Chemical mapping of a 207-nucleotide RNA with 2A3 and DMS. It was measured as part of the RMDB library OK3TST. The reactions ran in a buffer of 150 mM KOAc, 10 mM MgCl2 and 150 mM bicine (pH 8.5), at 24 C. Values are in units of 0.01, from 0 to 300, in steps of 10. 2A3 adducts were read by reverse transcription with SuperScript II with manganese. Values cover nucleotides 27 to 156.
[RMDB]
RNA sequence: GGGAACGACUCGAGUAGAGUCGAAAAGAGACCAAUCAGGGCAACACAGUGAGACCCCUCGUCUCUACAAAAACCAAAAAAUUAGCCAGGUGUGGUGGUGCACACCUGUAGUUCCAGCUAAUUGAGAGGCUGGGUUGGGUGGAUUGCUUGAGCCCAGACAACUAUGUUUAUUCGUAAACAUAGUUGUAAAAGAAACAACAACAACAAC
Reactivity to 2A3 in 0.01 (KOAc 150mM, MgCl2 10mM, bicine 150mM(pH8.5), 24C), signal-to-noise 5, nucleotides 027 to 156: g090a010g030a030c010c010a010a060u150c090a130g000g020g000c010a020a000c010a020c040a090g020u020g030a020g030a030c000c000c010c000u010c010g020u020c010u000c000u050a100c090a030a120a060a030a050c110c100a100a140a020a030a010a010u030u020a010g030c000c000a000g000g010u000g000u000g020g050u040g070g050u140g040c000a000c000a000c000c000u000g010u030a060g040u100u130c090c030a010g000c000u010a030a020u040u050g010a020g000a010g050g050c160u240g180g030g000u180u160g040g000g000u060g040g120a160u050u090g000c000u000u010g010a000g000c000c000c000a000g010
Reactivity to DMS in 0.01 (KOAc 150mM, MgCl2 10mM, bicine 150mM(pH8.5), 24C), signal-to-noise 3, nucleotides 027 to 156: g010a120g010a140c020c040a090a110u010c100a110g000g020g010c030a070a130c050a170c050a250g020u010g020a180g000a130c040c010c020c030u000c080g030u000c000u000c000u010a300c080a030a050a100a060a140c080c040a020a050a070a090a050a090u010u000a040g000c050c000a050g030g010u000g040u000g000g020u010g030g000u000g010c010a010c010a010c010c000u000g020u000a050g010u000u000c030c020a100g030c020u010a040a110u000u000g000a140g000a150g010g010c060u000g010g010g020u000u000g000g090g040u000g000g010a250u000u000g010c000u010u000g010a250g010c010c000c000a060g010